RNA sequence: GGGAACGACUCGAGUAGAGUCGAAAACACGAAGGUUGGCUAAUCCUGGUCGGACAUCAGGAGGUUAGUGCAAUGGCAUAAGCCAGCUUGGCGCUAAUAGAUACUAAUCGUAGCAUAGCUGAAUAAAGGUACUACCUACGUUCGCGUAGGUAGUACCAAAAGAAACAACAACAACAAC
Reactivity to 2A3 in 0.01 (KOAc 150mM, MgCl2 10mM, bicine 150mM(pH8.5), 24C), signal-to-noise 3, nucleotides 027 to 126: c080a010c060g040a070a040g040g000u010u010g010g000c010u000a000a040u030c000c000u000g000g030u060c180g070g060a020c010a070u010c010a020g020g000a020g020g020u030u120a060g010u040g020c000a060a130u160g090g000c000a030u040a270a030g080c000c000a000g010c030u060u020g130g000c010g010c000u030a060a000u030a140g090a040u060a120c020u090a090a010u070c070g040u020a010g040c040a030u060a080g000c020u020g070a090a000u160a110a140a050
Reactivity to DMS in 0.01 (KOAc 150mM, MgCl2 10mM, bicine 150mM(pH8.5), 24C), signal-to-noise 2, nucleotides 027 to 126: c080a120c130g000a160a110g000g050u000u010g010g000c040u000a080a220u000c000c010u000g000g000u010c140g000g010a250c080a050u000c010a000g000g000a040g010g060u000u010a010g040u000g000c090a140a060u030g000g000c000a070u030a220a100g000c000c000a000g000c040u020u000g000g040c000g000c010u000a010a070u000a040g000a040u000a030c140u060a120a040u020c050g030u000a010g050c060a100u000a010g020c050u000g000a060a160u020a040a080a050
An RNA of 177 nucleotides, treated with 2A3 and DMS and read out base by base. Source: RMDB library OK1LIB, as collected in RNAgym. For 2A3 the reverse transcriptase was SuperScript II with manganese. For DMS the reverse transcriptase was MarathonRT. For 2A3, 2,346 sequencing reads were counted. The DMS profile rests on 2,514 reads.